[RMDB]
Source information
Conditions: 150 mM KOAc, 10 mM MgCl2 and 150 mM bicine (pH 8.5), 24 C. Chemical mapping of a 177-nucleotide RNA with DMS. It was measured as part of the RMDB library OK2TRN. For DMS, 1,566 sequencing reads were counted.

RNA sequence: GGGAACGACUCGAGUAGAGUCGAAAAUUACAGGCGCAUGCCACCACACCUGGCUAAGGUUUUUGUUUUAGUUUGGAGACAGGAGUCUCACUGUGUUGCCCAGACUGGUCUUGGACACCUGAGUUCAGAUAACAGGUGGGUUCGCCCACCUGUUAUCAAAAGAAACAACAACAACAAC
Reactivity to DMS in 0.01 (KOAc 150mM, MgCl2 10mM, bicine 150mM(pH8.5), 24C), signal-to-noise 2, nucleotides 027 to 126: u010u010a130c060a080g030g000c060g020c090a050u000g000c040c030a100c040c030a100c090a070c020c030u010g020g000c050u010a050a060g020g010u000u030u000u010u000g010u000u000u000u000a060g020u000u010u000g020g010a110g010a040c010a130g030g000a150g010u000c020u000c120a090c050u000g020u000g010u000u000g010c070c020c020a090g000a060c050u000g010g000u000c060u000u000g020g000a040c040a050c060c030u020g000a080g000u010u000c060a080